[RMDB]
RNA sequence: GGGAACGACUCGAGUAGAGUCGAAAAGGCCUUGUAGGCAUCUGGCAAGGAGCCUGGGCUGGCUGGCUCCUCCAGCAUCAGCUGUGGAGAGACAUGACGCUGAAGGGAAGCUGGCCUCCAAGUCAGGGAGAGCUCUGAAUGUGCAAGUAAAAGAGUACAGGUAUCCAGGAUUCGUCCUGGAUACCUGAAAAGAAACAACAACAACAAC
Reactivity to 2A3 in 0.01 (KOAc 150mM, MgCl2 10mM, bicine 150mM(pH8.5), 24C), signal-to-noise 2, nucleotides 027 to 156: g090g030c000c010u040u100g160u110a060g040g060c020a030u010c020u050g020g000c070a060a050g060g000a080g030c000c060u040g020g000g050c040u020g000g020c000u030g010g030c000u010c010c010u030c000c010a000g000c020a020u030c000a050g130c110u050g040u170g050g120a140g010a000g010a060c130a200u010g000a000c040g010c030u000g000a000a040g020g010g020a090a010g010c010u020g000g000c010c000u020c020c020a060a010g030u030c040a050g000g000g010a080g010a000g010c020u020c020u030g080a140a050u120g020u050g070c050a100a050g040u090a080a140a060a040g070a030g030u120a020
The record gives the reactivity of an RNA of 207 nucleotides to 2A3. Reactivities are given for positions 27 through 156.